RNA sequence: GGGAACGACUCGAGUAGAGUCGAAAAGAUAUGGAUUAAGGGAGAGAUGUGUCGGAAACGACAUUUCUCGAAGAACUUACGGUCCUAAGUCAAAACGCAGGCAUUAGGUUCGCCUAAUGCCUGCGAAUCAAUUCCUUCUCUUCGGAGAAGGAAUUGAAAAAGAAACAACAACAACAAC
Reactivity to DMS in 0.01 (KOAc 150mM, MgCl2 10mM, bicine 150mM(pH8.5), 24C), signal-to-noise 2, nucleotides 027 to 126: g000a010u000a290u020g000g000a020u010u000a030a040g000g000g000a130g000a010g000a020u000g020u010g000u000c000g000g000a050a010a190c010g010a010c000a000u000u000u010c010u000c000g020a090a140g000a140a170c020u000u010a010c300g020g000u000c000c000u000a050a080g010u000c020a150a070a090a160c020g020c010a010g010g000c000a010u000u000a000g010g010u000u030c300g000c000c000u000a000a010u000g000c000c000u010g010c000g000a010a050